[RMDB]
RNA sequence: GGGAACGACUCGAGUAGAGUCGAAAACGUUAGGUGGCGCUGUAGAGGCCACUCGGGCUCGACACUGCGUUACCUCGCAGGUCACCGAUACACGGGUUUCGUGAUCGUGGUCUGUGUAGCGCCCGGAGCGUACGAACCCGUUCGCGGGUUCGUACGCAAAAGAAACAACAACAACAAC
Reactivity to 2A3 in 0.01 (KOAc 150mM, MgCl2 10mM, bicine 150mM(pH8.5), 24C), signal-to-noise 2, nucleotides 027 to 126: c080g000u070u220a050g050g180u150g040g040c020g000c000u030g000u010a040g000a020g160g000c000c040a040c110u050c000g000g000g050c040u020c050g030a000c220a050c300u000g000c000g020u020u150a080c040c020u020c000g000c000a000g030g000u000c040a020c000c080g000a000u190a100c000a000c050g090g000g000u100u210u180c070g010u000g010a050u070c060g010u000g060g000u000c000u000g030u040g000u040a000g020c010g030c000c000c000g000g000a030
Chemical mapping of a 177-nucleotide RNA with 2A3. The reactions ran in a buffer of 150 mM KOAc, 10 mM MgCl2 and 150 mM bicine (pH 8.5), at 24 C. 2A3 adducts were read by reverse transcription with SuperScript II with manganese. The data come from the RNA Mapping Database (RMDB), library RFM100.